Background:
An RNA of 207 nucleotides, treated with 2A3 and DMS and read out base by base. For DMS, 3,812 sequencing reads were counted. The data come from the RNA Mapping Database (RMDB), library OK3TST.
RNA sequence: GGGAACGACUCGAGUAGAGUCGAAAAAAUGCUAGGAAAUGUAGUGUAUAAACUUGUAAUUGUGUAAAGUCUGCGAAUCCGACGUUGCUUUCAAUUGGCAAGGUUAUUUUACCUGGUGCAUUCCAAUGUCCUAACAACAACAGAAACGUGCGAUAGGCUUGAAGGUUAUCUUCGGAUAACCUUCAAGAAAAGAAACAACAACAACAAC
Reactivity to 2A3 in 0.01 (KOAc 150mM, MgCl2 10mM, bicine 150mM(pH8.5), 24C), signal-to-noise 3, nucleotides 027 to 156: a010a010u090g000c040u030a020g000g030a080a150a100u110g020u080a080g050u030g060u130a050u040a170a120a040c020u010u000g040u050a030a040u040u040g020u000g030u070a060a060a060g020u000c040u040g070c090g040a060a060u100c070c020g010a010c040g060u010u050g010c010u010u110u110c030a040a070u050u010g040g010c010a020a010g060g000u060u020a100u040u170u050u060a090c010c010u070g080g010u020g060c030a010u080u000c020c000a040a050u160g030u080c010c010u060a030a030c050a020a010c000a010a010c010a050g090a070a100a030c070g040u060g030c050g060a060u070a050g040g000
Reactivity to DMS in 0.01 (KOAc 150mM, MgCl2 10mM, bicine 150mM(pH8.5), 24C), signal-to-noise 2, nucleotides 027 to 156: a110a070u020g010c010u000a090g000g010a030a060a080u000g000u000a090g050u000g030u020a060u000a120a030a060c030u020u010g020u010a080a040u000u010g010u010g010u000a040a040a080g010u010c020u000g040c050g020a110a080u010c110c050g010a030c040g030u000u000g000c010u030u000u000c000a060a080u000u010g030g040c020a030a030g000g020u010u000a060u010u000u000u000a060c040c010u020g010g000u000g020c070a150u010u010c020c010a050a150u010g010u000c010c000u010a030a050c050a050a100c040a050a170c070a090g020a010a080a070c060g020u000g030c000g040a100u000a140g020g020
For 2A3, 1,524 sequencing reads were counted. For DMS the reverse transcriptase was MarathonRT.